Chemical mapping of a 177-nucleotide RNA with DMS and 2A3.
For 2A3 the reverse transcriptase was SuperScript II with manganese.
The RNA was probed in 150 mM KOAc, 10 mM MgCl2 and 150 mM bicine (pH 8.5) at 24 C.
[RMDB]
RNA sequence: GGGAACGACUCGAGUAGAGUCGAAAAGCUACACUCUUCGGAGUGUAGCAAACCCGAUGAAGCGGCACUUACGGAGCUACAUACAUCUAAGAGUGCAAAUAAAAAUCGGCGACUUCGGUCGCCGAAACGACUACAUCAAGUUCGCUUGAUGUAGUCGAAAAGAAACAACAACAACAAC
Reactivity to DMS in 0.01 (KOAc 150mM, MgCl2 10mM, bicine 150mM(pH8.5), 24C), signal-to-noise 1, nucleotides 027 to 126: g030c000u000a010c000a000c020u020c000u000u040c090g030g000a080g030u000g000u000a000g000c000a000a030a060c040c000c000g030a110u000g020a100a080g000c070g060g180c020a000c000u000u000a090c300g000g030a020g010c170u010a080c300a100u030a110c180a130u000c020u010a130a210g000a000g000u000g000c020a080a100a120u000a090a090a040a110a090u000c010g000g000c000g030a040c000u010u010c220g020g040u000c000g050c000c000g000a000a000a080
Reactivity to 2A3 in 0.01 (KOAc 150mM, MgCl2 10mM, bicine 150mM(pH8.5), 24C), signal-to-noise 1, nucleotides 027 to 126: g000c000u000a010c000a010c000u010c000u000u040c120g070g050a000g000u000g000u020a000g000c010a010a000a000c000c000c000g010a120u200g050a040a040g130c160g040g000c020a020c010u070u050a030c120g010g010a010g000c030u080a070c040a160u250a060c040a060u000c000u030a170a000g020a000g100u030g040c040a020a100a010u100a020a040a000a020a010u020c000g010g040c010g000a000c000u030u060c250g080g000u020c000g020c020c000g010a000a000a000

Source: RMDB library M2PK50, as collected in RNAgym. Reactivities are given for positions 27 through 126. For DMS the reverse transcriptase was MarathonRT.